[RMDB]
RNA sequence: GGGAACGACUCGAGUAGAGUCGAAAAGCACUCCAAACUGGAACGGCACUAGCACGCGGAAGCAGUCCCACUCGAGCACACUGGUGUCAUUUUGAUUGAAGAUUGUAUCCAGCAGUCUAGAGGAAAAUAAUACCGACGUGUUCGCACGUCGGUAUUAAAAAGAAACAACAACAACAAC
Reactivity to DMS in 0.01 (KOAc 150mM, MgCl2 10mM, bicine 150mM(pH8.5), 24C), signal-to-noise 2, nucleotides 027 to 126: g000c120a080c030u020c010c000a030a110a190c100u000g000g000a040a040c160g020g020c040a010c030u010a030g020c030a230c200g000c030g000g000a070a000g020c030a140g030u010c010c020c000a300c020u000c100g000a300g010c040a050c160a070c010u000g000g040u010g020u010c020a080u000u000u000u000g000a070u010u000g020a060a050g080a060u000u000g000u000a150u000c010c060a110g020c010a040g000u000c040u000a110g000a070g000g000a060a010a090a180
Reactivity to 2A3 in 0.01 (KOAc 150mM, MgCl2 10mM, bicine 150mM(pH8.5), 24C), signal-to-noise 1, nucleotides 027 to 126: g040c000a030c030u100c000c000a080a090a150c020u050g010g030a040a050c050g080g040c020a000c020u030a000g000c110a040c080g000c010g010g060a000a020g000c040a030g050u040c030c000c000a030c010u010c020g010a010g070c000a000c010a000c060u050g010g000u010g050u050c050a030u070u160u110u080g220a190u030u110g090a030a040g000a080u040u000g000u000a030u040c020c000a030g080c000a000g040u000c050u060a050g040a020g060g220a010a150a030a010